[RMDB]
RNA sequence: GGGAACGACUCGAGUAGAGUCGAAAAUUGACGUGUACGCCGGCGAGCAUCUGGUCGCGGCGUUGUUCAAGGUUGGCAGCUCGGGCCAGAUCUACCAGCAGCUGCACCGUAUCGUGGGUGAUGCGAACCUGCACUCAUGGUUCGCCAUGAGUGCAGGAAAAGAAACAACAACAACAAC
Reactivity to DMS in 0.01 (KOAc 150mM, MgCl2 10mM, bicine 150mM(pH8.5), 24C), signal-to-noise 3, nucleotides 027 to 126: u010u010g010a040c170g020u000g030u010a020c080g010c020c020g040g010c050g010a080g010c140a110u010c050u000g010g010u010c010g030c020g010g000c100g030u000u010g010u010u000c060a080a110g020g010u030u010g020g020c010a020g000c010u010c010g000g010g020c020c020a070g010a020u000c080u000a080c060c020a190g020c020a100g010c040u000g010c020a050c040c020g030u010a040u000c040g000u010g010g010g020u010g000a070u000g010c040g000a090a160
Reactivity to 2A3 in 0.01 (KOAc 150mM, MgCl2 10mM, bicine 150mM(pH8.5), 24C), signal-to-noise 2, nucleotides 027 to 126: u040u060g040a020c020g000u040g040u180a010c090g000c010c000g120g030c050g030a010g010c050a050u030c060u110g050g000u020c080g000c010g300g000c060g010u000u020g010u040u040c060a060a030g180g100u160u060g160g000c040a010g000c030u010c000g020g000g000c020c010a000g030a050u020c020u040a100c090c000a000g040c000a000g020c000u010g010c000a010c000c030g000u000a030u090c040g040u160g110g150g060u220g020a030u050g000c030g030a010a060
Chemical mapping of a 177-nucleotide RNA with DMS and 2A3. High 2A3 reactivity points to a flexible backbone, as in loops and unpaired stretches. The DMS profile rests on 3,147 reads. The RNA was probed in 150 mM KOAc, 10 mM MgCl2 and 150 mM bicine (pH 8.5) at 24 C.